This 207-nucleotide RNA was probed chemically with DMS and 2A3. Source: RMDB library RNAMAK, as collected in RNAgym. The RNA was probed in 150 mM KOAc, 10 mM MgCl2 and 150 mM bicine (pH 8.5) at 24 C.
[RMDB]
RNA sequence: GGGAACGACUCGAGUAGAGUCGAAAAACAAAGGAUUCGUCCUUUGUAAAAAACCGUAGGCGAGGUGCACUUGGACCCUACCCACCAUCGUUCGAAAGAGCGAUGAGGGCUAGUGCUUCUCGCCUAAACGGAAAAAACAAUGUGUUCGCACAUUGAAACAACAAUUACUAUUCGUAGUAAUUGUUGUAAAAGAAACAACAACAACAAC
Reactivity to DMS in 0.01 (KOAc 150mM, MgCl2 10mM, bicine 150mM(pH8.5), 24C), signal-to-noise 4, nucleotides 027 to 156: a040c000a010a010a010g020g010a080u000u020c300g030u000c000c000u010u000u010g010u000a020a070a050a040a050a070c010c020g030u000a060g000g020c010g020a030g010g000u000g020c020a020c010u000u010g070g010a140c080c030c010u010a090c090c050c020a170c210c000a020u000c000g040u000u010c010g020a210a110a240g000a030g010c000g000a020u000g000a090g020g030g010c030u000a030g040u010g010c000u000u000c000u000c010g000c000c000u010a000a010a040c010g020g010a000a050a060a070a080a080c010a040a010u010g010u000g030u010u010c300g030c030a030c020a030u000u010g010a170a120
Reactivity to 2A3 in 0.01 (KOAc 150mM, MgCl2 10mM, bicine 150mM(pH8.5), 24C), signal-to-noise 7, nucleotides 027 to 156: a000c010a010a000a000g010g010a020u050u110c190g050u020c060c000u000u010u010g000u040a010a030a000a000a010a030c010c000g010u010a010g010g000c000g000a000g000g010u020g010c000a000c020u090u140g220g160a300c020c020c000u100a130c090c060c020a080c080c000a000u000c000g000u010u000c010g030a130a060a040g000a000g000c000g000a000u020g130a050g010g000g010c020u000a000g000u000g000c000u060u040c000u000c000g020c000c000u000a000a000a000c000g010g100a080a040a000a010a000a030c020a010a000u010g020u010g030u080u100c270g040c090a000c010a000u020u070g050a200a100